[RMDB]
RNA sequence: GGGAACGACUCGAGUAGAGUCGAAAAGAAUUUAUAGAAAGAACAGUGGUUUAGGCGUUUAUAUAUUCGACUUUAAGAAUGAUACUUGCAGUGGUAUCUAUGAAGAUAGGCAGGCUAUCAUAGAAAGAAGAUGAUUAAUAUUCGUAUUAAUCAUCUUAAAAGAAACAACAACAACAAC
Reactivity to 2A3 in 0.01 (KOAc 150mM, MgCl2 10mM, bicine 150mM(pH8.5), 24C), signal-to-noise 2, nucleotides 027 to 126: g000a030a030u130u250u020a060u060a020g160a030a080a020g060a060a010c040a030g030u060g030g050u070u050u090a020g000g000c030g030u000u050u000a110u010a030u000a010u050u030c030g040a030c020u080u100u040a050a040g060a020a090u040g010a000u010a000c020u020u010g010c000a020g010u070g110g010u030a010u000c000u000a020u150g090a050a010g000a010u020a000g000g040c030a000g030g000c040u000a020u020c010a030u010a030g130a010a110a000g090
Reactivity to DMS in 0.01 (KOAc 150mM, MgCl2 10mM, bicine 150mM(pH8.5), 24C), signal-to-noise 7, nucleotides 027 to 126: g000a070a030u010u010u010a060u030a090g010a060a080a060g000a050a040c050a110g020u010g010g010u020u000u010a050g000g000c100g010u010u000u000a040u010a050u020a050u010u000c030g010a090c070u020u010u020a080a090g010a080a050u010g000a010u000a020c030u000u000g010c050a080g010u030g010g010u000a010u000c000u000a080u020g010a070a040g000a030u000a020g000g010c020a030g000g010c190u000a030u000c010a040u010a070g000a070a080a110g010